RNA sequence: GGGAACGACUCGAGUAGAGUCGAAAAUGGUAGUCUGCCACUCUAAGGGGACGCCUUUAGAAGAAGAGGCUAGGUGGUAUUCCGGUGUGGGAUACUUGGUAAUAUGUAACGCUAAUUGCAUAAGAUUAAAACUUUGCAUACUUCGGUAUGCAAAGAACUCGCAUAAGUUGUUCGCAACUUAUGCGAGAAAAGAAACAACAACAACAAC
Reactivity to 2A3 in 0.01 (KOAc 150mM, MgCl2 10mM, bicine 150mM(pH8.5), 24C), signal-to-noise 1, nucleotides 027 to 156: u070g090g050u030a040g030u000c000u010g160c040c020a020c010u110c010u010a100a080g020g010g000g050a020c060g100c000c000u060u000u020a090g010a110a010g000a030a050g070a010g020g000c010u020a010g060g000u050g030g020u020a020u040u020c030c020g110g140u160g010u070g090g000g050a080u020a030c000u010u070g040g000u050a020a060u080a100u170g010u030a020a030c030g050c120u050a260a000u010u050g000c010a000u040a220a040g030a130u200u140a060a070a110a090c000u000u000u000g000c000a000u010a000c000u010u010c010g040g000u000a000u000g000c000a000a000a010g000a000a020